[RMDB]
RNA sequence: GGGAACGACUCGAGUAGAGUCGAAAAGAGGUUGGAGCCUGUAUCUUCAGACGUUAGUUACAAAGGGGACUCACUACAGUUUUUGGCUGUGUGCGUUAUCAACUGAAGUGCUCUUGCUGGGGGAGUGCACCUCUAUUCCGUUCGCGGAAUAGAGGUGAAAAGAAACAACAACAACAAC
Reactivity to DMS in 0.01 (KOAc 150mM, MgCl2 10mM, bicine 150mM(pH8.5), 24C), signal-to-noise 3, nucleotides 027 to 126: g010a040g000g010u010u020g000g000a110g010c030c040u000g020u020a070u020c010u030u020c020a020g000a080c140g010u010u020a060g060u030u040a070c180a040a120a120g000g000g000g000a050c030u000c010a000c030u060a020c010a030g010u010u000u030u040u030g000g000c010u000g000u010g000u000g010c070g010u000u030a260u030c040a100a090c040u020g000a080a090g020u020g000c040u000c030u010u000g000c020u000g000g010g000g000g000a050g010u010g000
Reactivity to 2A3 in 0.01 (KOAc 150mM, MgCl2 10mM, bicine 150mM(pH8.5), 24C), signal-to-noise 5, nucleotides 027 to 126: g080a010g000g020u070u070g020g000a020g020c010c030u090g060u090a100u060c030u040u030c020a060g010a100c070g100u090u180a050g040u130u130a140c100a060a100a040g020g040g020g000a000c000u020c040a010c080u230a030c030a040g020u010u010u100u220u260g180g000c010u020g000u000g000u030g060c000g030u040u050a170u220c030a040a060c030u040g010a060a020g030u040g040c020u010c010u070u040g010c040u040g010g010g000g010g010a040g040u050g040
The data come from the RNA Mapping Database (RMDB), library OK1LIB. Structure probing data (DMS and 2A3) for a 177-nucleotide construct. DMS adducts were read by reverse transcription with MarathonRT. The RNA was probed in 150 mM KOAc, 10 mM MgCl2 and 150 mM bicine (pH 8.5) at 24 C. The DMS profile rests on 5,330 reads.